[RMDB]
RNA sequence: GGGAACGACUCGAGUAGAGUCGAAAAUUCACGCCGCAGACAACACGCGACUCGUGGUGCGCACGACUGCAAAGUGCGACGUGCUGCAGGCCACUGGCCACUACAUCCUGGCCAACUGCCCAGUGGGGCUGAGUCUCAGUUUCGACUGAGACUCAGCAAAAGAAACAACAACAACAAC
Reactivity to 2A3 in 0.01 (KOAc 150mM, MgCl2 10mM, bicine 150mM(pH8.5), 24C), signal-to-noise 1, nucleotides 027 to 126: u120u040c010a010c110g000c000c010g000c020a000g040a110c030a090a010c030a040c020g050c040g290a170c040u030c100g030u060g040g040u120g000c060g030c000a010c020g070a100c070u140g040c100a120a070a000g130u010g040c000g000a030c020g060u060g000c010u050g000c040a150g090g000c020c000a040c020u010g040g000c000c010a060c050u180a090c030a110u010c000c020u020g000g000c010c000a000a020c040u050g010c000c010c000a010g030u080g020g020g030
Reactivity to DMS in 0.01 (KOAc 150mM, MgCl2 10mM, bicine 150mM(pH8.5), 24C), signal-to-noise 2, nucleotides 027 to 126: u010u010c050a090c120g000c080c020g040c010a020g020a150c110a140a190c060a020c120g020c090g010a060c130u020c080g010u000g000g020u000g030c080g030c050a030c020g000a100c160u000g010c120a060a180a070g000u000g010c000g000a080c000g020u000g000c070u000g020c060a140g020g000c000c080a070c040u000g020g000c010c000a030c100u000a130c100a120u000c190c150u000g000g000c000c000a020a060c080u010g000c020c000c030a170g020u010g030g000g000